[RMDB]
RNA sequence: GGGAACGACUCGAGUAGAGUCGAAAAGGCACUCAUGGACACCCAUAGAACUCCACGAGUUCACGGAAAAUCUGAUUCACAGAUGUGAACUGAAUUCCGUGGAGAAGUGUCCUUCUAUGGGAGUGCAGCAGUGCGGUACAUUCGUGUACUGCACUGCAAAAGAAACAACAACAACAAC
Reactivity to 2A3 in 0.01 (KOAc 150mM, MgCl2 10mM, bicine 150mM(pH8.5), 24C), signal-to-noise 2, nucleotides 027 to 126: g090g010c010a000c020u010c000a090u100g030g000a000c000a030c030c000c000a000u010a020g010a020a010c010u020c010c000a000c000g000a010g090u000u000c000a000c000g010g030a000a010a000a000u000c010u000g040a220u080u040c050a030c000a080g280a170u150g060u000g020a010a000c000u000g000a000a050u050u000c040c010g000u010g010g000a020g010a010a020g020u020g020u020c010c000u000u000c000u000a020u010g000g000g000a000g000u000g000c000a010
Reactivity to DMS in 0.01 (KOAc 150mM, MgCl2 10mM, bicine 150mM(pH8.5), 24C), signal-to-noise 5, nucleotides 027 to 126: g000g020c020a020c000u000c040a090u010g000g010a120c200a100c070c010c010a020u000a030g000a030a070c050u000c080c010a000c000g010a090g000u000u000c000a010c010g000g000a080a030a010a010u000c000u000g000a210u000u010c110a090c000a130g010a050u010g010u000g000a160a120c140u000g000a040a080u000u000c070c040g010u000g000g000a000g000a040a140g000u000g010u010c060c120u000u000c010u000a010u000g000g010g000a020g000u000g000c000a110